[RMDB]
RNA sequence: GGGAACGACUCGAGUAGAGUCGAAAAGUGAAAGCAAUAGUUACAGCAAUUGUUACAUUUCAUCUUGCCCGUGGCAUUCGUGGAAUUGAAAAAAGCACAAUGAAAAAUAGCAGGAAGACACCACCAGGCUGCGACACCACCAGGCUUGGGAUAAUCAAGGACUAAAUGAGUUCGCUCAUUUAGUCCUAAAAGAAACAACAACAACAAC
Reactivity to 2A3 in 0.01 (KOAc 150mM, MgCl2 10mM, bicine 150mM(pH8.5), 24C), signal-to-noise 2, nucleotides 027 to 156: g030u030g040a010a000a070g030c020a020a040u040a100g070u070u110a070c030a030g030c060a130a120u100u010g000u100u000a030c030a070u020u040u080c050a110u060c020u060u120g010c000c030c010g010u060g020g020c090a090u050u050c100g010u050g070g030a120a120u040u150g060a110a090a060a020a000a000g040c010a010c020a010a040u070g090a000a060a050a040a100u050a030g010c000a020g040g000a020a010g010a030c040a030c000c010a010c000c000a000g000g000c000u000g000c030g020a010c020a060c040c000a020c020c020a010g100g000c040u020u040g040g000g010a050u150a100a040u120c060a030
Reactivity to DMS in 0.01 (KOAc 150mM, MgCl2 10mM, bicine 150mM(pH8.5), 24C), signal-to-noise 1, nucleotides 027 to 156: g020u020g010a030a060a130g050c020a050a030u010a090g020u000u010a050c120a190g020c180a070a050u010u000g000u000u000a070c030a150u020u000u020c020a020u000c050u010u000g010c010c000c120g030u010g010g000c040a120u000u000c040g010u010g000g010a080a120u010u000g000a000a010a040a000a080a070g000c010a050c060a010a080u010g010a000a070a110a090a120u000a080g020c010a000g020g050a050a020g010a070c020a100c160c050a030c010c030a110g020g040c010u000g000c000g010a100c080a040c000c000a020c020c010a130g010g030c010u000u000g000g040g000a010u010a020a100u000c090a100